Chemical mapping of a 207-nucleotide RNA with 2A3.

RNA sequence: GGGAACGACUCGAGUAGAGUCGAAAACUUCUCAGAAUCCAGCAAGAGGCGUGGCGAGAGGGCCGCGGUGCUCUGGAGUAGAGGCUCUGCCUUCGAAACACCAUCGAUCGUCCCUUCUUCUUUACCUUCUUCUGGCUCUUCUUGGGGACGCGACCGGCCGCGUACCCAAGUUCGCUUGGGUACGCGGAAAAGAAACAACAACAACAAC
Reactivity to 2A3 in 0.01 (KOAc 150mM, MgCl2 10mM, bicine 150mM(pH8.5), 24C), signal-to-noise 2, nucleotides 027 to 156: c020u040u050c010u000c000a030g010a100a080u300c000c010a040g040c110a030a010g000a010g040g030c110g040u010g030g010c020g010a040g000a000g010g000g010c010c000g070c000g000g000u000g000c000u000c000u020g000g000a010g000u000a000g000a000g010g000c040u130c200u300g070c020c000u210u190c010g000a010a010a010c000a000c130c000a000u000c020g090a300u030c000g000u010c000c000c000u080u090c030u070u000c010u040u080u060a020c000c000u000u030c000u000u000c000u010g000g000c000u000c000u000u000c010u000u040g000g010g000g020a000c060g030c050g130a040c040c000g030g030

Notes:
High 2A3 reactivity points to a flexible backbone, as in loops and unpaired stretches. The data come from the RNA Mapping Database (RMDB), library VIROID.